[RMDB]
RNA sequence: GGGAACGACUCGAGUAGAGUCGAAAAGUCCUUGACAACAGCAAGGACAAACAACGCGACUCUUGGGCGGCGAGUAUUGGUGGCGGCAGCGGCAGCAACUGCGGCUGCAUGGGGGUGGCGGCGGCAGGCUGCCAAGCCAGUUCGCUGGCUUGGCAGCAAAAGAAACAACAACAACAAC
Reactivity to DMS in 0.01 (KOAc 150mM, MgCl2 10mM, bicine 150mM(pH8.5), 24C), signal-to-noise 1, nucleotides 027 to 126: g000u010c030c000u000u100g040a110c190a100a210c300a100g030c000a030a000g010g000a000c040a090a030a040c120a110a120c290g040c020g050a070c030u000c010u000u000g010g000g000c070g000g000c080g010a060g000u020a070u000u010g020g000u020g020g030c050g050g000c030a000g000c000g030g070c050a060g000c250a040a110c120u000g040c000g000g030c000u020g020c000a030u020g000g010g000g000g000u020g050g000c130g010g030c120g010g000c040a060g000
Reactivity to 2A3 in 0.01 (KOAc 150mM, MgCl2 10mM, bicine 150mM(pH8.5), 24C), signal-to-noise 2, nucleotides 027 to 126: g010u010c000c000u030u020g100a140c110a220a040c020a150g100c000a030a010g030g010a010c000a000a060a000c010a050a010c050g030c000g010a010c020u020c010u050u030g000g060g000c020g010g020c020g000a030g030u030a080u080u100g030g000u060g070g040c090g000g010c010a010g010c010g150g020c010a010g060c010a030a080c120u130g010c020g090g000c000u000g000c000a020u050g010g000g000g000g000u030g020g040c030g010g000c010g020g030c000a000g050
An RNA of 177 nucleotides, treated with DMS and 2A3 and read out base by base. The reactions ran in a buffer of 150 mM KOAc, 10 mM MgCl2 and 150 mM bicine (pH 8.5), at 24 C. Reactivities are rounded to 0.1 and cut off at 0 and 3. DMS adducts were read by reverse transcription with MarathonRT. For 2A3, 1,519 sequencing reads were counted.